[RMDB]
RNA sequence: GGGAACGACUCGAGUAGAGUCGAAAAGAUAUGGAUUCCACUGGGACAUGCAUUUGCGUCGGAAACGACGCAGGGUGCAACAGCCCAGGUGGAAUCCUAAGUCAAAACUUAGACUUCGGUCUAAGAAUCCUAACAGAAUGUUCGCAUUCUGUUAGGAAAAAGAAACAACAACAACAAC
Reactivity to DMS in 0.01 (KOAc 150mM, MgCl2 10mM, bicine 150mM(pH8.5), 24C), signal-to-noise 4, nucleotides 027 to 126: g000a030u000a300u010g000g000a020u000u000c000c000a020c000u000g000g010g000a080c100a270u000g000c000a010u010u020u010g010c000g010u000c000g000g000a120a080a220c000g010a010c000g000c000a000g010g000g010u000g020c000a050a080c270a190g010c010c000c000a050g030g010u000g020g000a020a010u000c000c000u000a010a080g010u010c020a110a090a110a190c000u000u000a020g000a020c010u000u030c280g030g000u010c000u010a010a000g000a180a160
Reactivity to 2A3 in 0.01 (KOAc 150mM, MgCl2 10mM, bicine 150mM(pH8.5), 24C), signal-to-noise 3, nucleotides 027 to 126: g010a010u050a040u130g000g000a000u000u020c000c000a010c010u020g000g010g040a090c080a300u220g000c010a020u030u050u050g000c000g010u000c010g000g040a070a070a080c000g020a000c040g020c000a010g020g050g000u000g000c030a120a080c010a160g070c000c000c010a000g090g060u060g010g000a000a000u000c000c000u000a020a010g030u000c020a000a030a160a220c000u020u010a010g000a010c000u030u040c300g160g000u020c000u000a000a000g000a010a090